The record gives the reactivity of an RNA of 177 nucleotides to DMS and 2A3.
The RNA was probed in 150 mM KOAc, 10 mM MgCl2 and 150 mM bicine (pH 8.5) at 24 C.
RNA sequence: GGGAACGACUCGAGUAGAGUCGAAAAUCAUCUUGAACUUGAUACAAUAUAGUACAGCACUUUGAAAAUGAAUCAUCUGCUAGUUCAGUAUUUUCUAAUUACAAUCACUCCCUCUCAAGGCAGGUAAUCAUUGAAUUCACUUCGGUGAAUUCAAUGAAAAAGAAACAACAACAACAAC
Reactivity to DMS in 0.01 (KOAc 150mM, MgCl2 10mM, bicine 150mM(pH8.5), 24C), signal-to-noise 3, nucleotides 027 to 126: u020c080a100u020c000u000u000g040a040a050c040u020u000g000a150u010a070c090a070a100u060a070u030a070g000u000a010c080a060g050c020a010c100u000u020u030g000a050a050a070a110u040g010a090a020u030c040a040u010c040u000g010c030u000a060g020u000u000c030a080g010u000a060u000u010u020u000c030u010a050a070u010u020a070c090a030a090u010c130a070c040u000c010c010c030u010c060u010c100a050a050g000g000c040a010g000g000u000a050a110
Reactivity to 2A3 in 0.01 (KOAc 150mM, MgCl2 10mM, bicine 150mM(pH8.5), 24C), signal-to-noise 6, nucleotides 027 to 126: u060c000a010u000c020u070u090g040a050a040c000u020u080g020a020u080a090c040a070a070u110a030u120a190g050u040a030c030a020g040c050a050c080u090u090u080g100a100a070a030a040u160g050a050a080u050c000a020u010c010u020g030c020u040a030g050u030u010c030a010g020u050a140u030u040u010u000c030u060a080a120u080u060a070c080a030a030u070c020a030c060u030c010c010c000u030c010u020c040a030a030g030g000c010a010g020g070u050a010a040